[RMDB]
RNA sequence: GGGAACGACUCGAGUAGAGUCGAAAAUAGUAAGGUGCAGCUUGGUGAUUUUACAUUUGAAAAAGGUGAAGGUAAGGAUGUUGUCUAUUAUAAAGCAACGUCUACUGCUAAAUUGUCUGUAGGAGACGGAGGAAUAAUCUUUCGAGAUUAUUCCUCCAAAAGAAACAACAACAACAAC
Reactivity to DMS in 0.01 (KOAc 150mM, MgCl2 10mM, bicine 150mM(pH8.5), 24C), signal-to-noise 4, nucleotides 027 to 126: u000a110g010u000a100a060g010g020u010g010c040a050g030c060u010u000g010g020u000g000a110u000u010u000u000a050c060a100u000u000u000g000a030a070a080a080a050g010g010u000g010a090a070g010g000u020a060a110g000g010a010u000g010u010u000g010u000c020u000a090u010u010a160u010a100a100a100g010c020a020a040c020g010u000c000u000a070c090u000g000c040u010a040a080a110u010u000g010u000c040u000g010u000a080g000g000a120g000a090c180
Reactivity to 2A3 in 0.01 (KOAc 150mM, MgCl2 10mM, bicine 150mM(pH8.5), 24C), signal-to-noise 2, nucleotides 027 to 126: u160a020g070u050a060a040g060g040u060g000c020a000g000c030u070u100g010g010u020g040a050u040u010u010u180a060c030a080u050u090u180g110a060a070a020a020a000g030g000u070g030a060a010g040g000u050a050a000g020g000a000u040g000u010u010g030u000c030u000a120u210u060a080u220a090a240a000g000c010a010a000c000g000u000c020u040a040c020u020g030c000u030a050a100a140u110u070g010u030c030u030g080u080a040g000g130a040g010a020c080